An RNA of 177 nucleotides, treated with 2A3 and DMS and read out base by base. Source: RMDB library OK1LIB, as collected in RNAgym. Reactivities are given for positions 27 through 126. For DMS the reverse transcriptase was MarathonRT.
[RMDB]
RNA sequence: GGGAACGACUCGAGUAGAGUCGAAAAGCUGACUGAGCCAGGCGAUGGCCGGAAGGUGGUCUGCCACCCCACAGCGUGGGACUUAGGGAAGGGUGACUUCAGGAUCAAGAUGUGCACGAAGGUCACAAGUGAAGCCUAGUUUCGACUAGGCUUCACUAAAAGAAACAACAACAACAAC
Reactivity to 2A3 in 0.01 (KOAc 150mM, MgCl2 10mM, bicine 150mM(pH8.5), 24C), signal-to-noise 2, nucleotides 027 to 126: g020c000u020g000a050c020u000g010a000g000c000c000a100g010g000c000g250a270u080g110g000c070c000g010g050a130a000g010g050u110g000g100u030c090u110g060c010c020a020c010c000c000c000a110c000a000g150c040g000u090g000g060g040a000c070u090u080a090g000g010g050a150a100g070g000g080u100g110a040c000u010u000c040a020g060g000a070u030c000a020a090g150a240u100g060u040g050c000a000c000g000a100a000g050g000u040c040a040c080a020
Reactivity to DMS in 0.01 (KOAc 150mM, MgCl2 10mM, bicine 150mM(pH8.5), 24C), signal-to-noise 2, nucleotides 027 to 126: g000c040u010g000a160c090u020g000a170g000c000c010a060g010g020c050g010a140u000g010g040c010c020g000g000a040a270g000g050u000g010g000u000c040u000g020c020c040a200c050c000c000c120a020c120a060g010c070g000u000g000g000g000a110c100u040u060a070g000g050g000a080a080g000g000g040u030g000a070c030u000u000c050a090g000g000a110u000c060a060a070g000a070u000g030u000g030c140a090c060g020a080a040g020g030u010c020a030c000a170